Source: RMDB libraries RFM100 and RFMREP, as collected in RNAgym. Structure probing data (DMS and 2A3) for a 177-nucleotide construct. For DMS the reverse transcriptase was MarathonRT.
RNA sequence: GGGAACGACUCGAGUAGAGUCGAAAACAGCACUCUAGAAUUGUCUCACCAUUUGAAUAGGUGCUGCUCAGCCCUUUUGAGUCUGUCAUCGGAAAGACCAUGGCUUUCUCGCUUUUCAUCUUUUUGGAUAACUUAGGGGUUUCGACCCCUAAGUUAUAAAAGAAACAACAACAACAAC
Reactivity to DMS in 0.01 (KOAc 150mM, MgCl2 10mM, bicine 150mM(pH8.5), 24C), signal-to-noise 4, nucleotides 027 to 126: c010a040g010c000a000c030u020c030u000a050g020a080a070u000u000g010u020c100u010c150a110c230c050a040u020u000u010g000a180a200u020a040g010g000u000g020c010u000g010c050u010c110a130g000c010c010c050u000u020u010u020g010a040g000u000c010u010g000u000c030a040u000c170g030g020a110a110a060g010a120c040c030a040u000g000g000c020u000u000u000c020u010c010g010c170u020u000u010u020c120a090u010c020u000u000u010u000u000g020g020
Reactivity to 2A3 in 0.01 (KOAc 150mM, MgCl2 10mM, bicine 150mM(pH8.5), 24C), signal-to-noise 8, nucleotides 027 to 126: c000a000g000c000a000c010u290c020u040a020g040a100a100u080u060g080u040c040u050c130a120c070c020a090u070u040u140g170a140a080u080a060g000g010u010g000c010u010g010c000u050c050a060g000c000c000c000u050u070u040u130g010a000g000u010c010u020g020u010c010a030u060c080g000g060a160a200a070g080a110c020c010a010u020g010g000c000u010u020u000c010u010c020g070c100u110u110u130u100c070a130u030c060u010u110u060u060u090g200g070